[RMDB]
RNA sequence: GGGAACGACUCGAGUAGAGUCGAAAAGGAGGUGGGGUCGGACUCCACGCAUGUGAAGGCGUUCGACCAGAACCUGUUCACCGAGUGGCACUCGCGGUACGGGGGCCGGGGUGUGCUCAUCUACUGGCACAUCGAGGAGCGGUCGAUGGCCGUGCACGAUACGGUUGACUUUCGAGUCAACCGUAUCAAAAGAAACAACAACAACAAC
Reactivity to 2A3 in 0.01 (KOAc 150mM, MgCl2 10mM, bicine 150mM(pH8.5), 24C), signal-to-noise 1, nucleotides 027 to 156: g060g070a010g000g010u130g000g160g000g000u000c010g060g000a000c010u010c020c010a040c090g140c060a120u160g150u060g120a170a080g000g020c050g010u000u000c010g000a010c010c020a020g050a020a000c010c010u000g080u080u120c170a180c070c000g000a020g000u060g120g000c010a000c050u040c030g220c010g080g000u140a140c070g030g020g010g000g000c020c010g000g000g000g000u000g000u000g010c000u000c040a100u020c020u150a160c090u110g000g000c000a020c000a230u000c010g020a060g050g110a060g070c120g030g150u000c030g020a020u000g050g020c010c000g050u060g020c030a050c250
Chemical mapping of a 207-nucleotide RNA with 2A3. Source: RMDB library OK3TST, as collected in RNAgym.